[RMDB]
RNA sequence: GGGAACGACUCGAGUAGAGUCGAAAAGGCGCUAUCAGAAAUUCAACGCUAUCAAAUUUUGAUGGUGAUGGGAACGGCGCUAGCAACAAACAUAUUUUAUGUACCUCACGUGUUUGACUUAAUCAUUUCCCCCUCAUUCAUUCGUGAAUGAGGGGGAAAAAGAAACAACAACAACAAC
Reactivity to 2A3 in 0.01 (KOAc 150mM, MgCl2 10mM, bicine 150mM(pH8.5), 24C), signal-to-noise 2, nucleotides 027 to 126: g050g000c000g000c000u040a140u210c140a050g090a040a020a100u050u090c040a090a090c000g000c000u020a000u000c030a090a080a070u130u220u150u130g020a020u020g000g000u140g000a100u110g000g060g000a040a000c000g020g000c000g010c040u050a000g010c020a000a090c030a000a090a000c020a000u090a020u000u220u090u130a290u300g000u170a140c000c000u130c000a040c080g000u000g010u000u000u000g070a090c080u150u150a040a020u070c040a040u000u020